[RMDB]
RNA sequence: GGGAACGACUCGAGUAGAGUCGAAAAGAUAUGGACAAGCGGGAGGAUUCCGGUUAUCACAUCUACCUCGGAAACGAGGUAGAUGUGCCGAGACCGUCGUGAGUCCGAAGAACGCUUGUCCUAAGUCCUUACCAGGGAACUUCGGUUCCCUGGUAAGAAAAGAAACAACAACAACAAC
Reactivity to DMS in 0.01 (KOAc 150mM, MgCl2 10mM, bicine 150mM(pH8.5), 24C), signal-to-noise 1, nucleotides 027 to 126: g010a130u000a300u010g010g000a020c000a020a090g000c000g050g000g020a120g010g010a020u000u000c000c000g030g000u000u030a170u000c020a020c010a020u000c000u010a000c000c010u000c000g020g000a120a160a230c000g000a030g010g010u000a000g000a020u000g000u000g000c300c110g030a230g000a050c000c000g030u010c300g000u020g020a010g040u000c000c010g000a120a130g030a100a210c010g000c010u000u000g010u000c000c000u000a010a070g040u000c020
Structure probing data (DMS) for a 177-nucleotide construct. The RNA was probed in 150 mM KOAc, 10 mM MgCl2 and 150 mM bicine (pH 8.5) at 24 C. The data come from the RNA Mapping Database (RMDB), library TTRINS. DMS adducts were read by reverse transcription with MarathonRT.